This 170-nucleotide RNA was probed chemically with 2A3 and DMS. It was measured as part of the RMDB library 15KLIB.
RNA sequence: GGGAACGACUCGAGUAGAGUCGAAAACAGUAGCGGAGAUGCCACCACUGCAUAUGCCAAUAGUGUCUUUAACAUUUUGCAGGCGACAACUGCUAAUGUCAGUGCACUUAUGGGUGCUAAUGGCAACAUAGCUCCAGCUUCGGCUGGAGCAAAAGAAACAACAACAACAAC
Reactivity to 2A3 in 0.01 (KOAc 150mM, MgCl2 10mM, bicine 150mM(pH8.5), 24C), signal-to-noise 7, nucleotides 027 to 129: c020a050g060u060a000g050c050g000g060a070g000a060u020g010c000c000a010c020c010a050c090u080g000c020a020u100a060u210g060c000c000a030a030u070a060g010u020g010u020c010u030u120u110a040a010c000a010u040u030u040u110g000c000a010g020g030c060g130a050c030a080a020c020u000g000c000u010a030a000u000g010u020c020a010g010u020g150c020a000c000u050u070a070u100g040g030g020u020g000c000u050a100a060u030g010g040c000a000a020c040a050u140a000
Reactivity to DMS in 0.01 (KOAc 150mM, MgCl2 10mM, bicine 150mM(pH8.5), 24C), signal-to-noise 4, nucleotides 027 to 129: c120a070g020u030a070g030c080g020g030a030g030a130u020g020c030c020a050c040c080a090c080u040g000c050a040u070a090u060g020c070c040a060a280u070a030g020u000g000u000c050u010u100u040a040a030c030a050u000u000u000u000g000c020a010g000g040c200g000a070c210a000a000c040u030g040c040u060a060a020u000g000u010c140a140g010u100g010c000a010c000u000u080a150u050g020g000g040u050g040c050u000a050a100u100g050g000c020a010a020c140a090u130a090
For DMS, 12,187 sequencing reads were counted. 2A3 adducts were read by reverse transcription with SuperScript II with manganese.